[RMDB]
RNA sequence: GGGAACGACUCGAGUAGAGUCGAAAAGGAUCUGUGUGAAUGGUCGGUCGUGCCUAGGGCUGAUCAGAGAUCGGCCGCCCGUCCCAAGGGGCCACCAGGUCUGGGUGGGAUGAUGGAAGUCGUCGCAUCCGGACAUCUGAAGAAGCGGGUACAGGCUCCAUCUAUUGUUGUUCGCAACAAUAGAUGGAAAAGAAACAACAACAACAAC
Reactivity to 2A3 in 0.01 (KOAc 150mM, MgCl2 10mM, bicine 150mM(pH8.5), 24C), signal-to-noise 1, nucleotides 027 to 156: g100g040a060u000c050u040g110u040g030u040g170a150a090u070g020g040u050c030g000g010u030c060g040u040g030c020c020u050a070g070g030g000c010u030g050a040u010c040a020g000a010g010a140u070c010g000g010c000c000g070c000c010c000g030u040c010c010c010a050a060g090g000g000g010c000c000a020c020c020a020g000g000u000c000u010g000g020g000u020g020g100g010a000u020g000a010u010g070g170a090a170g050u000c040g000u010c020g010c180a000u010c000c000g000g010a000c010a040u050c030u060g050a080a050g050a050a010g000c010g000g000g000u010a040c020a060g030g030c000u000